Structure probing data (DMS and 2A3) for a 177-nucleotide construct. For 2A3, 9,239 sequencing reads were counted. It was measured as part of the RMDB library OK2TRN. For DMS, 5,006 sequencing reads were counted. The reactions ran in a buffer of 150 mM KOAc, 10 mM MgCl2 and 150 mM bicine (pH 8.5), at 24 C.
[RMDB]
RNA sequence: GGGAACGACUCGAGUAGAGUCGAAAACAUCGUCGCGCUGCGCACCGGCACCGGUAAGACCUCCAACAAGACCGGAAACGGUGUUGUUGCGCUGCGUAAUGCGCAGCUGGUCACGUUCACCGCGAUGCCGUAGGCAGAGCUUCGGCUCUGCCUACGGAAAAGAAACAACAACAACAAC
Reactivity to DMS in 0.01 (KOAc 150mM, MgCl2 10mM, bicine 150mM(pH8.5), 24C), signal-to-noise 5, nucleotides 027 to 126: c050a070u010c050g020u010c080g020c070g050c050u000g010c060g010c060a100c060c040g000g010c100a110c080c000g020g010u000a080a130g010a150c060c040u000c200c040a030a050c070a050a070g010a030c020c000g020g010a090a080a210c010g010g000u010g000u000u010g010u000u000g010c170g010c010u000g000c020g020u000a090a090u000g000c010g010c010a030g010c030u010g010g010u010c070a150c130g010u010u010c080a070c110c020g010c050g010a060u000g000
Reactivity to 2A3 in 0.01 (KOAc 150mM, MgCl2 10mM, bicine 150mM(pH8.5), 24C), signal-to-noise 5, nucleotides 027 to 126: c020a080u120c030g040u020c020g000c010g000c040u030g000c020g030c010a020c010c020g100g000c080a080c090c010g000g000u010a060a020g090a120c010c030u110c060c010a020a030c040a060a020g050a050c010c010g030g000a100a130a010c000g010g010u040g120u040u080g010u010u020g010c060g000c010u010g000c010g020u090a090a090u270g010c020g000c000a000g000c010u060g000g030u050c030a040c180g040u120u120c060a030c060c000g020c020g020a030u040g050